The data come from the RNA Mapping Database (RMDB), library M2RFPK. Structure probing data (2A3) for a 207-nucleotide construct. Reactivities are given for positions 27 through 156.
RNA sequence: GGGAACGACUCGAGUAGAGUCGAAAAGAAAGAAAGAAAGAAAUCUGAUAGAAUGACGGAUUCGAUCGUUGUGGUCGGCGGGCCACCACGUCAUUCCUUCGCACUGUCUCCGGGCAGACCGCCAUAAAAAAGCGGAUCUACUUCGGUAGAUCCGCAAGACACAUUUGACGUUCGCGUCAAAUGUGUCAAAAGAAACAACAACAACAAC
Reactivity to 2A3 in 0.01 (KOAc 150mM, MgCl2 10mM, bicine 150mM(pH8.5), 24C), signal-to-noise 2, nucleotides 027 to 156: g060a030a030a000g070a060a080a000g040a050a070a010g040a010a080a060u070c060u040g040a040u070a160g180a170a160u090g020a040c040g010g010a030u090u040c020g060a060u130c030g020u020u060g000u010g010g010u010c070g010g000c000g010g000g010c000c000a000c000c010a000c000g030u020c030a060u050u050c000c000u070u110c050g000c020a020c030u000g010u000c000u000c020c070g040g010g000c010a020g010a030c010c000g000c000c010a070u250a020a140a050a040a010a010g000c020g000g000a000u000c000u000a000c010u010u020c060g030g010u000a000g000a000u000c010c000g000c000a000a010